[RMDB]
RNA sequence: GGGAACGACUCGAGUAGAGUCGAAAAAUCACCGGUGGGGAACCCCAUACGGCAACGGCGUAGUAGUAAAUGCUAACCAAUCCGUGGUAUCUACGCGACGGAGCAUCCACGGAUAACUCUAACAAGGCUAAGCGUCUCGGUUUCGACCGAGACGCAACAAUACGAUUCUCUUCGGAGAAUCGUAUUGAAAAGAAACAACAACAACAAC
Reactivity to DMS in 0.01 (KOAc 150mM, MgCl2 10mM, bicine 150mM(pH8.5), 24C), signal-to-noise 1, nucleotides 027 to 156: a110u010c040a110c000c020g030g050u000g000g000g000g000a100a200c100c000c030c030a070u020a090c080g010g020c020a070a110c030g000g020c000g000u010a070g050u050a070g020u000a080a040a110u000g020c030u000a050a140c110c060a140a080u000c010c030g000u010g010g020u000a060u000c020u000a020c000g050c060g010a160c090g000g000a100g000c020a160u000c000c020a000c010g000g000a070u000a020a100c000u000c070u000a050a130c080a110a080g000g030c100u020a100a160g010c000g060u000c010u000c020g000g010u000u000u000c250g020a040c000c000g000a020g020a000c000g000c000a000a000
Reactivity to 2A3 in 0.01 (KOAc 150mM, MgCl2 10mM, bicine 150mM(pH8.5), 24C), signal-to-noise 3, nucleotides 027 to 156: a000u040c030a010c000c010g000g040u010g000g040g010g090a100a120c060c000c000c010a020u100a140c020g010g010c050a060a030c030g020g000c000g000u010a010g010u030a010g020u020a080a090a130u120g030c040u070a060a080c070c040a030a010u010c000c000g020u000g000g010u060a050u020c000u020a020c020g020c030g080a080c080g080g050a030g040c000a030u030c000c000a010c020g010g000a010u040a030a020c040u060c010u160a080a050c050a090a060g100g040c050u170a140a090g020c000g000u000c000u000c000g020g090u080u090u060c200g050a040c020c000g000a000g000a000c010g000c000a000a000